[RMDB]
RNA sequence: GGGAACGACUCGAGUAGAGUCGAAAAAUCCACGUACUCGCUCACGAUGGCCGUCAGGGCAGCCUCGGCUGAUCGUCUUUUUUCCAGAAGCCCGGCCAGCCCCCGCUCGUACUCCGCGUAGGGGGCCAUAUCGCUGAUCAUUCGUGAUCAGCGAUAUAAAAGAAACAACAACAACAAC
Reactivity to 2A3 in 0.01 (KOAc 150mM, MgCl2 10mM, bicine 150mM(pH8.5), 24C), signal-to-noise 3, nucleotides 027 to 126: a000u030c020c000a030c040g030u050a060c010u020c060g040c020u020c020a060c030g060a090u090g040g000c050c000g080u090c080a070g030g010g040c020a100g080c010c020u010c030g040g000c000u040g080a090u040c010g080u020c030u050u070u010u000u030u010c020c010a090g040a130a030g050c000c000c000g000g040c030c000a010g000c000c000c000c000c000g050c040u010c000g030u080a120c090u090c080c030g040c010g020u210a290g010g000g000g010g020c010c000
Reactivity to DMS in 0.01 (KOAc 150mM, MgCl2 10mM, bicine 150mM(pH8.5), 24C), signal-to-noise 2, nucleotides 027 to 126: a170u020c010c010a100c050g000u010a080c030u000c000g010c010u000c100a050c050g000a050u030g010g000c030c030g000u020c110a070g020g020g010c080a140g000c010c010u030c080g000g020c040u010g040a050u000c050g030u000c000u000u010u010u000u000u000c070c020a120g030a220a100g010c060c020c010g020g010c040c040a100g010c000c000c010c000c040g000c000u010c040g000u040a110c100u020c100c030g000c120g050u010a090g000g000g000g010g040c030c130

The data come from the RNA Mapping Database (RMDB), library OK1LIB. The record gives the reactivity of an RNA of 177 nucleotides to 2A3 and DMS. The RNA was probed in 150 mM KOAc, 10 mM MgCl2 and 150 mM bicine (pH 8.5) at 24 C. For DMS, 2,832 sequencing reads were counted. DMS adducts were read by reverse transcription with MarathonRT.